[RMDB]
RNA sequence: GGGAACGACUCGAGUAGAGUCGAAAAACUGAACCUGCCGCCCUCUCUUCGUCCCCUCCGGUAGCGGUUCCGGCUUCUCCGAUCUCGCUGGACAGUAUUUCUGAUACCCACAGCGAUCGCAGUGCCCCCGAUCUAGGUUUUUCGAAACCUAGAUCGGAAAAGAAACAACAACAACAAC
Reactivity to DMS in 0.01 (KOAc 150mM, MgCl2 10mM, bicine 150mM(pH8.5), 24C), signal-to-noise 1, nucleotides 027 to 126: a090c110u000g000a060a070c040c010u010g030c020c060g020c050c020c040u010c040u000c060u000u000c030g020u010c030c020c000c020u000c010c050g010g020u010a040g010c050g000g000u000u030c020c100g010g000c090u000u000c020u020c090c030g020a050u010c090u010c040g010c020u000g000g010a120c300a140g010u000a030u000u000u010c260u010g000a080u010a030c010c010c060a300c020a030g020c010g000a060u010c050g020c200a060g010u010g000c010c030c090

This 177-nucleotide RNA was probed chemically with DMS. Conditions: 150 mM KOAc, 10 mM MgCl2 and 150 mM bicine (pH 8.5), 24 C.